Annotation: Chemical mapping of a 177-nucleotide RNA with 2A3. The reactions ran in a buffer of 150 mM KOAc, 10 mM MgCl2 and 150 mM bicine (pH 8.5), at 24 C.
RNA sequence: GGGAACGACUCGAGUAGAGUCGAAAAGAUAUGGAGUUGUCUUGAUUGCCUAUGAAGUCUCCUCGGAAACGAGGAGAUGGAGGCAACAAGAGCAACUCCUAAGUCAAAACCGGCGUUCGCGCCGGAACGUAUCCCUGCCGUUCGCGGCAGGGAUACGAAAAGAAACAACAACAACAAC
Reactivity to 2A3 in 0.01 (KOAc 150mM, MgCl2 10mM, bicine 150mM(pH8.5), 24C), signal-to-noise 1, nucleotides 027 to 126: g000a000u090a000u250g000g000a000g000u040u000g070u050c010u010u300g160a300u300u000g190c000c000u300a300u290g000a040a000g000u080c000u000c050c000u050c020g000g000a020a070a110c020g000a010g020g010a010g000a000u020g000g000a000g090g000c000a000a000c000a000a000g050a190g020c000a000a000c000u000c000c000u000a000a010g080u080c040a000a110a180a240c000c000g010g000c000g020u130u190c300g000c010g020c140c010g040g000a020a000